[RMDB]
RNA sequence: GGGAACGACUCGAGUAGAGUCGAAAAGAUAUGGAUCUGCAAUCAACAGCCGACGGGUUCGGAAACGAACUUCGGACAUGAAUCAGAUCCUAAGUCAAAGUUCAGUCACCUUCGGGUGACUGAACAACGGUAUGUUUUGGUUCGCCAAAACAUACCGAAAAGAAACAACAACAACAAC
Reactivity to DMS in 0.01 (KOAc 150mM, MgCl2 10mM, bicine 150mM(pH8.5), 24C), signal-to-noise 2, nucleotides 027 to 126: g000a020u010a290u000g000g000a000u000c010u000g000c300a180a130u000c020a020a130c190a140g000c030c000g000a070c300g000g000g000u000u000c000g040g000a020a030a100c000g030a000a000c000u000u000c010g010g000a080c080a060u000g000a060a080u000c000a000g000a000u000c000c000u000a030a110g000u020c030a100a040a080g010u000u040c000a000g000u000c000a010c000c020u000u000c200g010g010g020u000g010a000c000u000g000a000a000c010a010a060
Reactivity to 2A3 in 0.01 (KOAc 150mM, MgCl2 10mM, bicine 150mM(pH8.5), 24C), signal-to-noise 2, nucleotides 027 to 126: g020a040u080a010u080g030g000a000u000c000u000g010c160a100a180u040c040a020a220c050a160g070c010c010g050a050c140g120g000g000u000u000c000g010g000a000a000a000c000g000a010a000c000u020u030c010g020g030a070c060a300u140g040a020a020u220c010a000g010a000u000c000c010u010a060a010g000u010c040a270a000a020g000u030u010c010a010g000u030c000a010c000c000u020u130c300g110g000g000u010g010a010c000u000g000a000a000c000a000a000